[RMDB]
RNA sequence: GGGAACGACUCGAGUAGAGUCGAAAAUGCUAAGCACUUCACUUUGAUGAUUUGCAACAACCUUAUGAGAAAAGUCCUGUAAUAAGUCCCAUCUUAUGGAGGAAUAAGCAGAGGCAAAGAGAGAUCAAGUGCCUUGUCCAAGAAGGGACAGCUUAUAGAACACAUGUUUAUUCGUAAACAUGUGUUCAAAAGAAACAACAACAACAAC
Reactivity to 2A3 in 0.01 (KOAc 150mM, MgCl2 10mM, bicine 150mM(pH8.5), 24C), signal-to-noise 6, nucleotides 027 to 156: u120g000c040u050a060a020g010c000a000c010u010u010c010a030c060u210u180u190g170a210u140g000a010u060u000u020g020c030a050a060c010a020a030c040c030u130u130a120u180g100a070g070a050a090a010a030g060u060c030c030u050g030u090a040a050u040a090a020g030u070c020c010c000a060u050c030u050u090a070u090g050g010a010g020g020a070a030u060a080a000g040c050a010g010a020g090g000c010a000a050a000g060a020g020a000g010a060u070c070a110a020g080u000g000c000c000u030u050g010u000c010c010a060a040g040a020a070g160g000g000a000c000a000g000c000u030u030a040u000a170
Reactivity to DMS in 0.01 (KOAc 150mM, MgCl2 10mM, bicine 150mM(pH8.5), 24C), signal-to-noise 3, nucleotides 027 to 156: u010g010c060u000a090a200g020c010a030c010u000u000c030a040c070u000u020u000g010a170u000g000a060u000u000u010g020c000a060a140c060a070a120c000c000u000u000a050u010g010a160g000a050a050a080a120g010u000c000c000u020g020u010a080a110u000a050a100g010u000c010c020c020a260u000c050u010u010a090u000g010g000a080g040g020a060a090u000a060a140g020c020a110g000a060g010g030c010a040a110a250g000a110g020a150g030a200u000c040a040a170g000u000g010c020c020u000u000g010u000c010c010a050a100g000a090a170g010g000g010a050c050a080g010c050u000u000a090u000a200
Conditions: 150 mM KOAc, 10 mM MgCl2 and 150 mM bicine (pH 8.5), 24 C. Structure probing data (2A3 and DMS) for a 207-nucleotide construct. For DMS the reverse transcriptase was MarathonRT. It was measured as part of the RMDB library OK3TST.